[RMDB]
RNA sequence: GGGAACGACUCGAGUAGAGUCGAAAAGAUAUGGAGCAUGAGAGCAACAGCGUCGGGUCGGAAACGACCCAGACGACAUGCUCCAUGCUCCUAAGUCAAAUCAUUAUACCGUUCGCGGUAUAAUGAACAAAUCAAUUAUCUUCGGAUAAUUGAUUUGAAAAGAAACAACAACAACAAC
Reactivity to DMS in 0.01 (KOAc 150mM, MgCl2 10mM, bicine 150mM(pH8.5), 24C), signal-to-noise 8, nucleotides 027 to 126: g010a020u000a040u010g000g000a010g000c010a000u000g000a190g010a020g020c000a150a210c190a170g010c000g000u000c000g000g010g030u000c000g010g000a010a010a030c000g010a020c010c000c000a020g020a000c000g000a040c090a070u010g020c000u000c000c000a000u000g000c000u000c010c000u000a000a040g000u000c010a150a150a210u000c000a000u000u000a000u000a000c000c000g020u000u020c240g030c010g000g010u000a000u000a000a000u000g000a030a250
Reactivity to 2A3 in 0.01 (KOAc 150mM, MgCl2 10mM, bicine 150mM(pH8.5), 24C), signal-to-noise 7, nucleotides 027 to 126: g000a000u020a010u070g000g000a000g000c000a000u020g060a080g010a010g300c090a090a300c150a300g020c010g010u000c010g000g020g000u000c010g010g000a020a000a000c000g000a000c010c030c020a020g000a000c000g030a020c010a090u190g000c000u000c000c000a000u000g000c000u000c000c000u000a010a000g000u000c010a020a050a130u040c000a000u000u010a000u000a010c020c010g010u050u110c300g000c020g190g000u010a000u010a000a000u000g000a010a040
Annotation:
The record gives the reactivity of an RNA of 177 nucleotides to DMS and 2A3. It was measured as part of the RMDB library TTRDES. The RNA was probed in 150 mM KOAc, 10 mM MgCl2 and 150 mM bicine (pH 8.5) at 24 C. The 2A3 profile rests on 34,388 reads.